[RMDB]
RNA sequence: GGGAACGACUCGAGUAGAGUCGAAAAGUCUCACGAGUGCAGAGACAAGGUAGUUGACUCCGGAGCUACCAAGUACUCGAAGGAAUGCGAAAGACAUCACGUAUUCCAACCGGAGAAGAUGUCAAAAGGGAACGUAGUAGUUCGCUACUACGUUCCCAAAAGAAACAACAACAACAAC
Reactivity to 2A3 in 0.01 (KOAc 150mM, MgCl2 10mM, bicine 150mM(pH8.5), 24C), signal-to-noise 2, nucleotides 027 to 126: g050u000c020u000c000a040c020g000a020g070u030g000c030a050g040a000g040a240c070a060a060g030g000u000a020g010u010u090g030a100c000u000c020c000g020g000a000g000c000u000a000c000c000a000a000g000u010a000c000u000c000g020a090a020g070g010a020a010u010g000c000g070a170a080a040g120a060c080a010u100c030a090c000g010u000a000u020u000c000c020a090a060c000c000g010g080a000g000a000a050g070a060u090g090u150c040a000a000a040a090
Reactivity to DMS in 0.01 (KOAc 150mM, MgCl2 10mM, bicine 150mM(pH8.5), 24C), signal-to-noise 1, nucleotides 027 to 126: g000u000c000u000c000a300c000g000a000g000u050g000c000a110g000a240g000a210c100a010a290g000g000u000a000g000u010u000g000a260c000u000c000c050g000g070a260g000c000u000a000c000c000a120a000g000u000a080c000u000c000g010a140a010g010g000a250a060u000g040c000g000a210a160a200g000a040c170a080u000c080a300c000g010u000a030u000u000c000c040a140a060c050c000g000g000a000g000a220a000g030a000u000g000u110c010a150a100a140a290